[RMDB]
An RNA of 177 nucleotides, treated with 2A3 and DMS and read out base by base. For DMS, 1,694 sequencing reads were counted. DMS adducts were read by reverse transcription with MarathonRT. The data come from the RNA Mapping Database (RMDB), library OK2TST.
RNA sequence: GGGAACGACUCGAGUAGAGUCGAAAAGUUCCAAUGAAAAGGGUUCUGGAUAGAGGCCCUUACUUUGAUACUUCAGCUACUAAAAACGUGACAUCCUUAGUUGGCAUAACAGGACACCUAAAUUGUACCAUCCCAUUUAGUUCGCUAAAUGGGAUGGAAAAGAAACAACAACAACAAC
Reactivity to 2A3 in 0.01 (KOAc 150mM, MgCl2 10mM, bicine 150mM(pH8.5), 24C), signal-to-noise 2, nucleotides 027 to 126: g000u030u000c020c020a040a140u160g030a050a070a010a020g050g030g030u120u300c050u100g110g110a130u180a260g160a100g110g080c010c010c000u000u000a030c020u000u020u060g030a030u040a080c010u030u040c030a020g020c030u050a030c010u060a140a040a030a040a040c050g040u030g040a030c000a060u050c010c000u030u030a000g030u010u110g040g020c040a040u020a090a000c020a070g030g000a020c010a110c020c000u070a170a110a060u140u140g030u040a030
Reactivity to DMS in 0.01 (KOAc 150mM, MgCl2 10mM, bicine 150mM(pH8.5), 24C), signal-to-noise 2, nucleotides 027 to 126: g020u000u010c080c030a070a070u000g010a080a110a040a040g030g000g020u000u030c040u020g000g030a170u020a090g020a080g000g010c010c010c130u000u010a050c050u000u000u000g010a100u010a020c060u000u000c070a070g000c040u010a080c050u010a040a090a050a100a080c130g000u010g010a040c060a060u000c030c040u000u000a060g020u000u000g020g000c030a070u010a050a060c120a030g020g000a050c070a060c040c020u010a040a050a100u000u010g000u000a220